[RMDB]
RNA sequence: GGGAACGACUCGAGUAGAGUCGAAAACGUUUCGUAGGUUACGUCUACGUUAAAACGUUACAGUUAAAUAUAACUGCUAAAAACGAAAACAACUCUUACGCUUUAGCUGCCUAAAAACAGUUAGCGUAGAUCCUCUCGGCAUCGCCCAUGUGCUCGACUGUAUAUAUUUCUUCGGAAAUAUAUACAGAAAAGAAACAACAACAACAAC
Reactivity to 2A3 in 0.01 (KOAc 150mM, MgCl2 10mM, bicine 150mM(pH8.5), 24C), signal-to-noise 9, nucleotides 027 to 156: c010g000u000u040u090c010g000u010a010g010g070u140u190a070c080g040u000c020u000a000c000g020u030u070a030a070a010a000c000g000u010u030a020c010a000g010u020u040a080a280a120u220a150u060a150a020c010u020g030c060u110a070a050a050a040a050c070g070a060a060a050a050c070a050a100c030u040c030u160u110a010c010g000c000u120u160u100a020g000c000u010g000c010c030u100a080a050a010a010a010c010a010g000u030u020a000g000c000g000u000a010g000a020u020c010c030u040c010u020c010g010g000c010a040u030c040g060c020c010c010a030u060g010u020g020c060u070c120g050a040
Reactivity to DMS in 0.01 (KOAc 150mM, MgCl2 10mM, bicine 150mM(pH8.5), 24C), signal-to-noise 3, nucleotides 027 to 156: c020g030u000u000u000c000g040u000a020g020g030u000u000a100c220g010u010c000u000a020c010g010u010u000a060a040a020a030c000g020u010u000a060c020a020g020u010u000a040a140a180u000a180u000a030a030c000u000g010c040u010a050a060a070a100a170c090g000a070a080a100a090c050a060a050c050u000c030u000u000a050c000g020c000u000u000u000a030g010c000u000g010c000c020u000a070a080a130a040a040c010a010g000u000u000a030g000c010g010u000a030g010a030u010c030c020u000c000u000c020g010g020c040a060u000c030g000c000c010c010a100u010g010u000g020c000u000c020g020a300